The record gives the reactivity of an RNA of 177 nucleotides to 2A3 and DMS. DMS (dimethyl sulfate) methylates the pairing face of unpaired adenines and cytosines. For DMS, 1,143 sequencing reads were counted.
RNA sequence: GGGAACGACUCGAGUAGAGUCGAAAAGUGCACGACUUCGGUCGUGCACAAAUAAAGGCAGUCGAGUGCGUACGGGACAGUCAUACGCUGACGCCACGACAAAAAGUAACGUCUUCGGACGUUACAAGAUGAGCGUAAGGUUCGCCUUACGCUCAUCAAAAGAAACAACAACAACAAC
Reactivity to 2A3 in 0.01 (KOAc 150mM, MgCl2 10mM, bicine 150mM(pH8.5), 24C), signal-to-noise 2, nucleotides 027 to 126: g000u000g050c000a010c030g010a020c030u070u060c220g030g020u000c010g000u000g000c000a000c000a000a000a000u010a010a050a010g040g050c070a020g040u030c000g070a040g170u210g030c010g010u030a070c070g000g000g140a080c050a060g100u110c030a030u060a080c050g000c050u030g000a010c020g000c000c000a040c060g030a030c070a020a120a020a010a020g000u000a000a000c000g000u000c000u030u040c080g070g000a000c000g000u020u000a000c000a010a000
Reactivity to DMS in 0.01 (KOAc 150mM, MgCl2 10mM, bicine 150mM(pH8.5), 24C), signal-to-noise 2, nucleotides 027 to 126: g020u000g000c020a000c000g010a040c000u000u010c200g010g010u010c000g070u020g000c000a010c030a000a040a060u000a050a100a150g000g000c020a100g000u000c000g000a050g030u000g060c010g030u000a070c090g010g030g020a120c230a140g000u000c040a030u000a060c030g000c000u000g000a020c030g000c020c020a180c090g000a090c070a040a040a080a060a130g010u000a030a010c000g070u000c000u000u040c230g020g000a000c000g000u000u000a000c000a030a070

It was measured as part of the RMDB library M2PK50. Values cover nucleotides 27 to 126. The RNA was probed in 150 mM KOAc, 10 mM MgCl2 and 150 mM bicine (pH 8.5) at 24 C. 2A3 adducts were read by reverse transcription with SuperScript II with manganese.